[RMDB]
RNA sequence: GGGAACGACUCGAGUAGAGUCGAAAAGAUAUGGAUCGAAGAUGGGAGAAGGUGGUCGGAAACGACCACCCUUCAUCGAUCAUCCGAUCCUAAGUCAAAAGUCCGUUACUCUUCGGAGUAACGGACACAGUUUGUAUUUGUUCGCAAAUACAAACUGAAAAGAAACAACAACAACAAC
Reactivity to DMS in 0.01 (KOAc 150mM, MgCl2 10mM, bicine 150mM(pH8.5), 24C), signal-to-noise 5, nucleotides 027 to 126: g000a020u000a040u010g010g000a000u000c010g010a180a180g010a020u000g010g010g000a010g020a050a070g000g010u000g000g010u000c000g030g000a010a020a050c020g000a010c000c000a000c300c200c040u000u000c000a300u000c220g000a040u000c000a020u000c000c000g010a000u000c000c000u000a010a100g000u000c000a080a110a150a130g010u010c000c000g010u000u010a010c010u000c010u000u010c250g010g000a010g000u000a000a000c000g010g000a000c000a020
Reactivity to 2A3 in 0.01 (KOAc 150mM, MgCl2 10mM, bicine 150mM(pH8.5), 24C), signal-to-noise 3, nucleotides 027 to 126: g000a000u010a000u050g010g000a000u010c020g090a230a090g000a100u020g000g020g020a080g000a020a010g000g000u010g000g000u000c000g010g000a000a010a000c000g020a000c000c000a010c020c000c010u010u000c000a040u300c000g010a000u000c000a010u020c000c000g000a000u000c000c000u000a010a000g000u000c020a000a000a090a260g000u000c000c000g000u000u000a010c000u020c020u050u160c300g170g000a000g000u000a000a010c000g010g000a000c000a000

This 177-nucleotide RNA was probed chemically with DMS and 2A3. Source: RMDB library TTRDES, as collected in RNAgym. DMS adducts were read by reverse transcription with MarathonRT. The RNA was probed in 150 mM KOAc, 10 mM MgCl2 and 150 mM bicine (pH 8.5) at 24 C. 2A3 adducts were read by reverse transcription with SuperScript II with manganese.